[RMDB]
RNA sequence: GGGAACGACUCGAGUAGAGUCGAAAAGAUAUGGAAUUCGUGUAGGGAGAUCGGUGUCGGAAACGACACCCAGAUCAUCGAUCUACCGAAUUCCUAAGUCAAAGUUGCAGCUGUUCGCAGCUGCAACCUGAUACCACUGCUUCGGCAGUGGUAUCAGAAAAGAAACAACAACAACAAC
Reactivity to 2A3 in 0.01 (KOAc 150mM, MgCl2 10mM, bicine 150mM(pH8.5), 24C), signal-to-noise 2, nucleotides 027 to 126: g000a000u020a020u090g010g010a020a010u010u000c040g000u040g000u300a010g060g060g130a300g000a070u020c010g030g020u010g010u000c000g010g000a030a010a000c010g000a000c010a010c000c030c030a090g000a000u040c010a040u300c200g210a220u000c000u000a000c000c010g000a000a000u000u000c000c010u000a010a000g000u000c050a200a100a150g020u030u030g000c000a000g010c000u030g150u130u300c300g000c220a010g000c000u000g020c000a000a000c010
Reactivity to DMS in 0.01 (KOAc 150mM, MgCl2 10mM, bicine 150mM(pH8.5), 24C), signal-to-noise 2, nucleotides 027 to 126: g010a040u000a180u030g000g000a020a010u010u000c000g010u030g040u020a010g000g000g000a150g000a000u010c040g000g020u000g000u000c000g000g010a020a020a080c010g010a000c000a020c020c050c220a040g010a030u000c020a250u010c270g000a190u010c010u000a020c000c000g000a040a010u000u010c000c000u000a010a050g000u010c010a120a110a150g000u000u000g000c000a020g020c020u000g010u000u020c240g040c000a010g030c000u000g000c000a000a000c010

This 177-nucleotide RNA was probed chemically with 2A3 and DMS. Source: RMDB library TTRDES, as collected in RNAgym. The RNA was probed in 150 mM KOAc, 10 mM MgCl2 and 150 mM bicine (pH 8.5) at 24 C. Values cover nucleotides 27 to 126. For DMS the reverse transcriptase was MarathonRT. The DMS profile rests on 1,806 reads. For 2A3 the reverse transcriptase was SuperScript II with manganese. As a SHAPE reagent, 2A3 marks flexible, mostly unpaired nucleotides at the ribose 2'-OH.